[RMDB]
RNA sequence: GGGAACGACUCGAGUAGAGUCGAAAACACUGAGGUCACACCCCUAUGUUUGUGACAUAGCAGCAGGUUGCCAUGGAGAUGAUGGCUUUAUCAGCCACACUACCUUGCCAUGACCUCACAACAAGGUUCUGACUAAUUACUUCGGUAAUUAGUCAGAAAAAGAAACAACAACAACAAC
Reactivity to 2A3 in 0.01 (KOAc 150mM, MgCl2 10mM, bicine 150mM(pH8.5), 24C), signal-to-noise 2, nucleotides 027 to 126: c060a010c030u040g000a010g020g000u020c000a030c000a000c030c020c020c010u020a010u040g090u020u130u200g250u150g050a030c020a020u060a000g060c060a000g000c030a030g040g040u080u100g040c060c010a040u080g020g010a030g030a120u080g010a040u020g030g000c000u050u080u010a210u110c080a000g030c030c000a000c010a000c000u170a230c000c000u000u000g000c040c000a070u080g000a020c010c000u030c000a020c010a020a020c010a050a030g110g000u040
Reactivity to DMS in 0.01 (KOAc 150mM, MgCl2 10mM, bicine 150mM(pH8.5), 24C), signal-to-noise 2, nucleotides 027 to 126: c130a020c230u000g000a000g020g010u000c000a140c190a190c090c020c060c010u000a010u010g000u000u000u000g020u020g000a070c050a010u000a020g000c090a120g000c160a080g000g010u000u000g010c150c080a020u010g000g000a090g000a110u000g000a150u000g000g020c000u000u000u010a060u000c230a040g000c000c020a000c070a100c030u000a070c010c000u000u010g000c110c050a120u000g000a020c000c020u000c000a030c110a030a040c110a060a060g030g000u000